Conditions: 150 mM KOAc, 10 mM MgCl2 and 150 mM bicine (pH 8.5), 24 C. The record gives the reactivity of an RNA of 177 nucleotides to DMS and 2A3. The 2A3 profile rests on 1,617 reads. Source: RMDB library OK2TRN, as collected in RNAgym. 2A3 adducts were read by reverse transcription with SuperScript II with manganese.
RNA sequence: GGGAACGACUCGAGUAGAGUCGAAAAGUCAUCCUGCCGCAGGUCACCGCUGCAGAGUACGGCAGGCUGUUUGUGGCGGACCUGAUGGUGGCACUGGAGCAGCACCCUCCGCCGCAGCCAUCGCAGCGUGUUACACGGACUUCGGUCCGUGUAACACAAAAGAAACAACAACAACAAC
Reactivity to DMS in 0.01 (KOAc 150mM, MgCl2 10mM, bicine 150mM(pH8.5), 24C), signal-to-noise 1, nucleotides 027 to 126: g000u020c100a110u010c000c020u000g000c030c020g050c150a060g000g000u010c090a090c070c090g020c000u010g000c030a090g010a130g000u000a060c040g000g000c020a030g000g000c130u000g000u000u000u000g030u010g010g000c020g000g010a080c170c030u010g010a070u010g000g030u010g000g020c050a080c060u010g020g000a110g020c030a090g000c010a030c040c030c100u000c010c010g010c030c010g000c050a030g020c060c120a070u000c060g000c060a040g010c060
Reactivity to 2A3 in 0.01 (KOAc 150mM, MgCl2 10mM, bicine 150mM(pH8.5), 24C), signal-to-noise 1, nucleotides 027 to 126: g000u000c030a030u050c020c000u020g000c010c020g050c000a020g060g050u110c040a020c110c140g000c020u030g000c040a020g000a000g090u120a110c090g040g010c020a010g030g100c040u120g000u050u260u030g050u010g010g030c000g030g000a030c000c000u100g030a150u170g000g030u050g060g030c030a020c090u150g020g100a080g000c070a000g000c040a060c010c000c010u060c010c000g010c010c000g020c020a020g000c000c010a030u090c060g000c020a010g010c030